[RMDB]
RNA sequence: GGGAACGACUCGAGUAGAGUCGAAAAGAUAUGGAAAUAUACUCCGUCCUAGGCGUUGAAAACUGCUCUAAGUCGGAAACGACUUAGAGCAGUUGGAGCCUACGACGGAAAGGUAUUUCCUAAGUCACUUUAUUAACCUGUUCGCAGGUUAAUAAAGAAAAGAAACAACAACAACAAC
Reactivity to DMS in 0.01 (KOAc 150mM, MgCl2 10mM, bicine 150mM(pH8.5), 24C), signal-to-noise 3, nucleotides 027 to 126: g010a040u000a300u010g000g000a020a020a010u000a010u000a050c030u000c000c000g010u000c000c140u000a000g020g020c000g000u010u020g010a180a110a020a010c000u000g000c010u000c000u010a020a030g020u000c000g020g010a130a160a260c000g030a020c010u000u000a010g010a010g010c010a010g000u010u000g010g000a100g020c010c000u000a020c300g000a000c000g000g020a000a010a000g000g010u010a000u000u000u000c010c000u020a050a180g020u010c020a170

About this RNA:
The data come from the RNA Mapping Database (RMDB), library TTRINS. An RNA of 177 nucleotides, treated with DMS and read out base by base. The DMS profile rests on 2,907 reads. For DMS the reverse transcriptase was MarathonRT.